[RMDB]
RNA sequence: GGGAACGACUCGAGUAGAGUCGAAAAUAAAAGCGGCAACCAACGCAGCAGAGGGAUGCAACCCAAGAAGCGGAAGGAGACGCAACUCCAAACCACGAAAGUGGAGCGAAACCAAGCCGCAAAAAAACGUUGUUGUAUUUUUCGAAAUACAACAACGAAAAGAAACAACAACAACAAC
Reactivity to 2A3 in 0.01 (KOAc 150mM, MgCl2 10mM, bicine 150mM(pH8.5), 24C), signal-to-noise 1, nucleotides 027 to 126: u060a030a070a040a030g040c020g000g000c030a010a040c040c030a000a060c000g010c000a000g020c000a000g090a060g150g000g000a030u150g120c030a130a110c020c000c000a010a020g170a050a010g010c010g010g040a020a050g020g030a030g020a010c020g010c100a030a030c040u070c040c000a060a050a050c010c000a010c000g040a180a010a010g010u010g000g000a050g000c030g050a050a000a020c010c010a010a040g070c000c000g000c010a110a000a000a000a050a000a000
Reactivity to DMS in 0.01 (KOAc 150mM, MgCl2 10mM, bicine 150mM(pH8.5), 24C), signal-to-noise 2, nucleotides 027 to 126: u000a070a100a120a100g030c050g020g020c000a050a140c070c070a130a100c070g000c040a000g000c180a120g000a190g000g000g000a090u020g040c260a170a290c020c000c050a040a170g010a100a090g000c010g000g010a100a200g000g000a010g000a290c090g000c110a160a090c070u000c090c110a010a080a200c000c000a000c010g010a020a120a190g000u000g000g000a050g000c060g000a020a150a130c020c010a020a140g030c000c020g000c000a000a000a020a060a030a010a040